[RMDB]
Overview:
The record gives the reactivity of an RNA of 177 nucleotides to 2A3 and DMS. The DMS profile rests on 7,848 reads. For 2A3, 20,667 sequencing reads were counted.

RNA sequence: GGGAACGACUCGAGUAGAGUCGAAAAGGAACUAUGUUCAUGCAUGAAGCCUCCACGUGCUUGUGAAAACGUUCGGAAACGAAUGAGCAUAGUUAAGAGCUGAAGGAGGCACGGCUCAAAAUAAAAAGGUUCAACAACUGUUCGCAGUUGUUGGACCAAAAGAAACAACAACAACAAC
Reactivity to 2A3 in 0.01 (KOAc 150mM, MgCl2 10mM, bicine 150mM(pH8.5), 24C), signal-to-noise 7, nucleotides 027 to 126: g090g010a000a010c000u000a000u000g000u010u000c000a000u010g000c000a000u010g030a080a020g000c000c000u000c000c000a010c000g010u000g000c000u130u160g070u020g130a020a000a000a010c030g060u040u030c060g090g060a070a080a030c030g040a080a010u010g000a000g000c000a000u000a000g000u000u020a070a040g000a000g000c000u000g020a100a020g030g000a000g000g000c010a010c000g000g000c000u000c000a050a050a000a000u180a010a060a010a010a000
Reactivity to DMS in 0.01 (KOAc 150mM, MgCl2 10mM, bicine 150mM(pH8.5), 24C), signal-to-noise 3, nucleotides 027 to 126: g030g010a020a010c000u000a010u000g000u000u030c000a000u000g000c000a010u010g000a050a070g030c000c000u010c000c020a300c000g010u000g000c020u010u040g000u000g000a060a050a090a040c020g010u030u000c020g010g000a130a090a090c010g010a070a000u000g000a000g020c000a000u000a000g000u000u000a020a100g000a010g000c000u000g000a090a130g020g020a000g020g030c010a300c060g000g000c000u010c000a110a040a070a060u030a020a050a080a100a060